Background:
Chemical mapping of a 177-nucleotide RNA with DMS. Reactivities are given for positions 27 through 126.
RNA sequence: GGGAACGACUCGAGUAGAGUCGAAAAUAGAGAUGGGGUUUUGCUAUGUUGCCCAGGCUGCUCUUGAACUCCUGGGCUUGAGCGAUGUUCGUGCCUGGGCCUCAUAAACUGCCACUAUGCAGUUUUAGCAUAUGCCUGGAUUCGUCCAGGCAUAUGCAAAAGAAACAACAACAACAAC
Reactivity to DMS in 0.01 (KOAc 150mM, MgCl2 10mM, bicine 150mM(pH8.5), 24C), signal-to-noise 2, nucleotides 027 to 126: u010a090g000a100g010a060u010g020g000g010g010u000u000u010u000g010c120u000a030u010g020u010u000g030c070c000c010a030g000g020c050u010g000c020u000c030u010u000g000a060a120c070u010c040c070u010g030g010g010c030u010u000g000a040g000c020g030a120u010g030u010u000c230g020u010g020c000c000u000g010g010g010c030c030u000c040a070u000a030a060a040c010u000g010c010c300a110c280u000a060u000g000c030a010g010u010u000u000u010a090